[RMDB]
RNA sequence: GGGAACGACUCGAGUAGAGUCGAAAAGAUAUGGACGAUGAUGGGACAUGUAUGGACUCGGAAACGAGUUUAAUACAACAGCCCAUUCAUCGUCCUAAGUCAAAACGCUUUGGUUCGCCAAAGCGAACGCUCUAACAAUCUUCGGAUUGUUAGAGCGAAAAGAAACAACAACAACAAC
Reactivity to DMS in 0.01 (KOAc 150mM, MgCl2 10mM, bicine 150mM(pH8.5), 24C), signal-to-noise 3, nucleotides 027 to 126: g010a040u000a300u010g000g020a020c000g000a000u000g020a040u000g010g000g000a100c100a170u010g010u000a010u000g020g000a000c000u000c020g000g000a130a070a250c000g000a020g000u000u010u000a040a050u000a000c010a030a090c290a130g000c020c000c000a020u030u020c000a010u020c010g000u000c000c000u000a010a060g000u000c030a140a080a090a240c050g000c000u010u010u010g000g000u010u010c300g000c000c020a000a010a010g020c000g010a040a060
Reactivity to 2A3 in 0.01 (KOAc 150mM, MgCl2 10mM, bicine 150mM(pH8.5), 24C), signal-to-noise 2, nucleotides 027 to 126: g020a000u030a030u120g000g000a010c000g010a000u010g010a000u000g030g010g040a030c090a220u200g000u010a010u020g000g060a010c010u000c010g000g000a040a040a020c030g000a000g010u010u030u040a280a030u030a010c040a180a080c040a120g160c010c010c000a000u010u010c000a010u000c010g010u000c000c010u000a010a000g000u000c000a010a010a040a110c010g000c000u010u000u020g050g040u010u100c300g030c130c010a000a000a000g000c000g010a040a000
An RNA of 177 nucleotides, treated with DMS and 2A3 and read out base by base. DMS adducts were read by reverse transcription with MarathonRT. As a SHAPE reagent, 2A3 marks flexible, mostly unpaired nucleotides at the ribose 2'-OH. The DMS profile rests on 2,234 reads. 2A3 adducts were read by reverse transcription with SuperScript II with manganese. For 2A3, 4,940 sequencing reads were counted. Source: RMDB library TTRDES, as collected in RNAgym.